[RMDB]
Notes
Structure probing data (2A3 and DMS) for a 177-nucleotide construct. 2A3 adducts were read by reverse transcription with SuperScript II with manganese. Conditions: 150 mM KOAc, 10 mM MgCl2 and 150 mM bicine (pH 8.5), 24 C.

RNA sequence: GGGAACGACUCGAGUAGAGUCGAAAAACUGAGGGAGAUGGACACUGUUUCCCAGAAGUAAAUACAGCUCAACUUGUACUUUGGAACAACUGGUCAACCUUGCUCCUUGCACAAUUCAUCAGCAAAGCUGUGAGAAUACGUUCGCGUAUUCUCACAGAAAAGAAACAACAACAACAAC
Reactivity to 2A3 in 0.01 (KOAc 150mM, MgCl2 10mM, bicine 150mM(pH8.5), 24C), signal-to-noise 4, nucleotides 027 to 126: a000c040u050g000a020g020g020g000a010g010a040u040g030g040a090c100a060c230u050g030u010u030u050c010c000c000a030g090a030a000g030u060a040a070a000u150a030c040a010g000c020u020c060a050a070c050u040u060g050u050a050c030u100u080u090g030g010a060a040c010a030a070c080u050g030g020u050c020a050a070c030c010u000u050g010c000u010c000c020u010u070g000c020a010c000a040a070u150u100c030a110u020c030a020g070c060a070a060a040g040
Reactivity to DMS in 0.01 (KOAc 150mM, MgCl2 10mM, bicine 150mM(pH8.5), 24C), signal-to-noise 4, nucleotides 027 to 126: a070c010u010g000a300g010g010g010a040g010a060u010g010g010a130c160a090c070u020g000u000u000u000c020c020c010a050g000a170a060g010u000a030a040a080u010a060c110a090g010c060u010c110a060a100c130u000u000g000u000a050c070u000u000u000g000g010a090a050c090a040a060c110u020g010g000u000c070a080a060c070c050u000u000g010c040u000c030c110u000u000g000c030a020c040a050a040u010u000c050a050u000c100a050g010c080a060a070a050g010